An RNA of 207 nucleotides, treated with DMS and 2A3 and read out base by base. The data come from the RNA Mapping Database (RMDB), library RNAMAK. The DMS profile rests on 4,658 reads. Values cover nucleotides 27 to 156.

RNA sequence: GGGAACGACUCGAGUAGAGUCGAAAACGAGAGCCUUCGGGCUCUCGAAAAGCGUACUACGAUCUACCCACCUCCCAGAACUACUCUAUAUAUCCCAAAUAGGAUAUGGAGAGCUGGGAGAGGAUCGUAUCGCAAAACUGACUUGUUCGCAAGUCAGCUUUAGGAAAGUGUUCGCACUUUCCUAAAGAAAAGAAACAACAACAACAAC
Reactivity to DMS in 0.01 (KOAc 150mM, MgCl2 10mM, bicine 150mM(pH8.5), 24C), signal-to-noise 2, nucleotides 027 to 156: c010g010a000g000a020g030c000c000u000u010c300g070g010g030c000u000c000u000c000g000a020a030a080a160g000c010g040u000a080c140u000a020c030g030a020u000c000u000a060c030c000c000a300c080c000u000c010c000c000a030g030a070a120c090u010a080c010u000c000u010a040u000a070u020a050u000c000c000c020a080a200a180u000a060g020g010a020u000a010u000g000g000a000g000a200g010c000u000g000g000g000a020g010a010g000g000a020u000c010g010u010a010u000c010g020c000a090a040a100a190c000u000g010a020c010u000u000g010u000u000c220g020c020a020a030g020u000c000a020g000
Reactivity to 2A3 in 0.01 (KOAc 150mM, MgCl2 10mM, bicine 150mM(pH8.5), 24C), signal-to-noise 6, nucleotides 027 to 156: c020g000a010g010a010g000c010c020u080u080c300g060g000g000c010u000c010u000c000g000a000a000a000a020g010c010g000u070a040c080u010a010c060g000a000u000c000u090a300c020c000c010a020c010c010u000c010c000c000a020g010a180a130c120u300a230c010u060c020u010a080u010a010u010a020u210c040c020c040a220a300a150u280a180g000g000a000u010a010u030g000g010a000g000a000g000c000u000g000g020g000a010g000a010g010g000a000u010c000g010u020a040u160c010g000c000a020a050a030a070c000u000g000a010c000u000u000g040u170u160c290g000c150a010a000g000u000c000a000g020